[RMDB]
RNA sequence: GGGAACGACUCGAGUAGAGUCGAAAAAAGUCCAUAUGCCCACCUUCGCUGUCGCGGGUGGAUGCUUAUACAUGCUAUGGAUGCCUACAUUUGAAAUAAUGUAGAUGCCUAAUACUCUCUCUCAGGGAGAGAGUUUAGAUGCCUCCAAAGCGAAUGCAUUUAUCGCUACGUUCGCGUAGCGAUAAAUAAAAGAAACAACAACAACAAC
Reactivity to 2A3 in 0.01 (KOAc 150mM, MgCl2 10mM, bicine 150mM(pH8.5), 24C), signal-to-noise 2, nucleotides 027 to 156: a000a010g090u020c000c000a030u000a040u160g030c010c010c010a020c010c000u150u100c090g050c100u210g130u300c100g000c030g010g000g010u000g000g000a020u210g000c010u100u080a060u020a090c050a080u150g030c000u060a040u040g000g010a000u010g010c010c000u000a000c010a000u010u020u070g180a120a090a050u140a050a010u020g000u000a000g010a060u100g020c000c010u080a130a010u200a040c000u000c000u010c000u000c000u020c140a160g070g250g040a010g000a000g000a000g000u000u000u000a000g010a000u050g040c020c020u000c000c000a040a070a010g020c010g080a140a070u110g030c040
Reactivity to DMS in 0.01 (KOAc 150mM, MgCl2 10mM, bicine 150mM(pH8.5), 24C), signal-to-noise 1, nucleotides 027 to 156: a070a100g000u000c010c010a090u000a110u000g000c060c010c000a020c000c010u000u000c010g020c090u000g050u010c110g020c030g040g000g040u000g020g000a040u000g000c030u000u000a200u000a060c050a120u000g010c040u000a100u000g010g010a070u000g020c060c020u000a000c010a000u000u000u010g030a180a090a170u000a040a080u000g000u010a020g000a140u000g030c040c000u030a000a010u000a020c000u000c000u000c000u000c000u010c140a300g020g030g020a030g010a020g010a020g010u000u000u000a010g000a060u010g000c090c020u000c020c040a080a100a090g000c010g000a110a070u010g020c070
This 207-nucleotide RNA was probed chemically with 2A3 and DMS. For 2A3, 905 sequencing reads were counted. The RNA was probed in 150 mM KOAc, 10 mM MgCl2 and 150 mM bicine (pH 8.5) at 24 C. Source: RMDB library OK3TST, as collected in RNAgym. For DMS the reverse transcriptase was MarathonRT.